[RMDB]
RNA sequence: GGGAACGACUCGAGUAGAGUCGAAAAUCGUGAGAUGUGGUGCCUCACGCGCUCGAGGCGUCCGUGGUCAGAGAGACCACUGACGCAAAAACUCGAGCGCAAAUAAAAGGCAUUACAUGGAGAAUAACAUAUAGUGAGCAUUCGUGCUCACUAUAUGAAAAGAAACAACAACAACAAC
Reactivity to 2A3 in 0.01 (KOAc 150mM, MgCl2 10mM, bicine 150mM(pH8.5), 24C), signal-to-noise 5, nucleotides 027 to 126: u160c060g030u090g090a160g010a060u010g000u010g010g000u000g010c010c000u050c030a090c140g000c000g000c000u000c000g000a000g000g000c000g000u000c010c000g000u010g000g000u000c040a040g120a060g020a020g000a300c000c000a000c000u000g000a000c000g000c000a030a120a050a040a050c000u000c000g000a000g000c000g000c000a000a000a000u090a000a080a000a000g000g000c000a000u000u000a000c000a000u010g040g020a110g050a090a170u200a170a000
Reactivity to DMS in 0.01 (KOAc 150mM, MgCl2 10mM, bicine 150mM(pH8.5), 24C), signal-to-noise 6, nucleotides 027 to 126: u020c060g020u020g000a270g020a010u000g020u000g000g010u000g010c000c010u000c100a210c250g010c000g010c000u000c010g010a020g000g010c000g010u000c000c090g000u010g000g010u000c010a160g020a190g010a240g000a000c010c000a020c000u000g000a020c000g000c030a040a020a060a090a290c000u000c010g010a010g000c000g020c000a010a030a070u020a070a080a080a010g000g000c000a010u000u000a000c000a000u010g000g000a210g020a120a080u020a070a220

About this RNA
Conditions: 150 mM KOAc, 10 mM MgCl2 and 150 mM bicine (pH 8.5), 24 C. An RNA of 177 nucleotides, treated with 2A3 and DMS and read out base by base. The 2A3 profile rests on 11,106 reads. For DMS the reverse transcriptase was MarathonRT. 2A3 adducts were read by reverse transcription with SuperScript II with manganese. 2A3 is a SHAPE reagent: it acylates the 2'-hydroxyl of flexible nucleotides of all four kinds. The data come from the RNA Mapping Database (RMDB), library OK1LIB.